[RMDB]
An RNA of 177 nucleotides, treated with DMS and 2A3 and read out base by base. Values are in units of 0.01, from 0 to 300, in steps of 10. DMS adducts were read by reverse transcription with MarathonRT. For DMS, 1,369 sequencing reads were counted. For 2A3 the reverse transcriptase was SuperScript II with manganese. For 2A3, 1,581 sequencing reads were counted. The reactions ran in a buffer of 150 mM KOAc, 10 mM MgCl2 and 150 mM bicine (pH 8.5), at 24 C.
RNA sequence: GGGAACGACUCGAGUAGAGUCGAAAAGAAAGAAAAGAAACUUCCGAUGAAGACCUGUAUUCUACGCCAGUACCACGGGUCGGUUUUCAUACAGGCGAUUUCUUCGAGCGAAAAUAUAAGAAAGAAAGCAUGAGUGAUGAUUCGUCAUCACUCAUGCAAAAGAAACAACAACAACAAC
Reactivity to DMS in 0.01 (KOAc 150mM, MgCl2 10mM, bicine 150mM(pH8.5), 24C), signal-to-noise 1, nucleotides 027 to 126: g000a060a040a170g030a130a050a050a110g000a100a010a070c070u020u020c050c060g040a130u030g030a080a000g040a180c000c000u010g010u000a010u000u020c180u010a070c170g000c080c060a040g010u020a050c120c090a050c150g020g000g030u000c010g000g000u000u040u010u040c080a070u040a070c030a020g000g000c110g030a100u030u000u000c020u000u020c060g000a140g020c010g010a020a010a000a040u010a000u030a050a100g000a030a100a080g030a110a070a090
Reactivity to 2A3 in 0.01 (KOAc 150mM, MgCl2 10mM, bicine 150mM(pH8.5), 24C), signal-to-noise 3, nucleotides 027 to 126: g060a010a080a010g090a080a070a020a050g130a020a130a040c080u160u010c000c000g030a050u110g000a040a030g030a070c040c000u030g000u080a050u050u070c060u040a020c030g120c060c020a140g070u160a040c000c060a130c090g110g000g010u000c000g020g000u010u010u040u090c040a040u060a000c000a020g010g020c030g070a080u050u030u000c000u010u000c000g000a000g000c030g080a170a040a020a000u240a010u050a000a060g080a080a050a000g080a030a110a000